Chemical mapping of a 177-nucleotide RNA with DMS and 2A3. The RNA was probed in 150 mM KOAc, 10 mM MgCl2 and 150 mM bicine (pH 8.5) at 24 C. The 2A3 profile rests on 962 reads. For DMS, 574 sequencing reads were counted. For 2A3 the reverse transcriptase was SuperScript II with manganese.
RNA sequence: GGGAACGACUCGAGUAGAGUCGAAAAAGUAACCCACCAGCACGUGUAAACGCACGCAAAAGCCCUUUAUGGCAAUGUGUCUCGGCUGGUUAUGGUACACCAAUCUGACGUAUGGUUAUCAGUAAUAGGUAUUCUCGUAGUUCGCUACGAGAAUACCAAAAGAAACAACAACAACAAC
Reactivity to DMS in 0.01 (KOAc 150mM, MgCl2 10mM, bicine 150mM(pH8.5), 24C), signal-to-noise 1, nucleotides 027 to 126: a190g000u040a130a050c020c010c110a120c030c000a010g000c010a240c010g000u010g020u010a000a060a060c150g010c190a060c030g010c010a040a040a180a150g000c000c000c300u000u040u000a040u000g040g010c000a000a300u000g030u000g010u000c040u000c030g070g030c000u000g000g000u010u010a040u030g060g020u030a030c060a080c000c030a010a300u000c050u010g000a070c150g030u000a150u000g040g030u010u000a070u000c000a100g000u010a100a090u040a030
Reactivity to 2A3 in 0.01 (KOAc 150mM, MgCl2 10mM, bicine 150mM(pH8.5), 24C), signal-to-noise 2, nucleotides 027 to 126: a020g030u070a060a090c010c000c000a000c000c020a020g000c030a020c110g010u000g020u030a030a020a000c050g060c180a000c010g010c030a050a050a020a000g020c010c030c000u140u220u270a210u300g000g000c010a020a080u040g000u000g010u020c020u000c030g020g000c000u000g000g000u000u040a020u020g090g000u010a010c010a010c140c000a060a130u090c110u260g150a040c040g170u180a030u110g000g010u040u010a010u000c000a040g100u180a000a210u080a180